[RMDB]
RNA sequence: GGGAACGACUCGAGUAGAGUCGAAAAGCUCUAGGAGACUAGAGCGAUACGUUAGAGAGCUCGUGGCAUGACUAACGGAAAGCCAGGUACGAGGUUGCCAGAGGACAUAGCUAUAGCUAUGUCCAAAGAGCUAUCAAAGGUUCGCCUUUGAUAGCUCAAAAGAAACAACAACAACAAC
Reactivity to 2A3 in 0.01 (KOAc 150mM, MgCl2 10mM, bicine 150mM(pH8.5), 24C), signal-to-noise 2, nucleotides 027 to 126: g000c000u020c000u000a010g020g030a070g040a120c000u010a020g010a000g010c000g000a020u050a050c030g000u000u090a000g060a050g040a070g150c020u040c140g050u130g030g000c040a060u100g010a090c010u010a030a020c030g040g030a080a000a000g070c060c050a010g060g050u060a020c080g020a040g120g040u040u020g000c000c000a010g000a030g040g000a000c000a020u000a000g000c010u130a100u020a300g050c000u000a010u000g000u020c000c010a010a010a010
Reactivity to DMS in 0.01 (KOAc 150mM, MgCl2 10mM, bicine 150mM(pH8.5), 24C), signal-to-noise 3, nucleotides 027 to 126: g010c000u000c000u000a020g000g000a300g040a220c000u000a000g010a010g020c000g000a060u010a040c040g010u000u000a010g010a220g000a200g000c000u020c130g000u000g000g030c040a110u010g000a190c010u000a050a030c060g000g000a090a010a040g000c030c020a150g000g030u010a040c100g020a060g010g000u000u020g000c060c020a090g000a280g000g000a020c020a010u000a000g010c000u020a130u070a120g030c000u010a000u000g010u000c000c000a000a030a090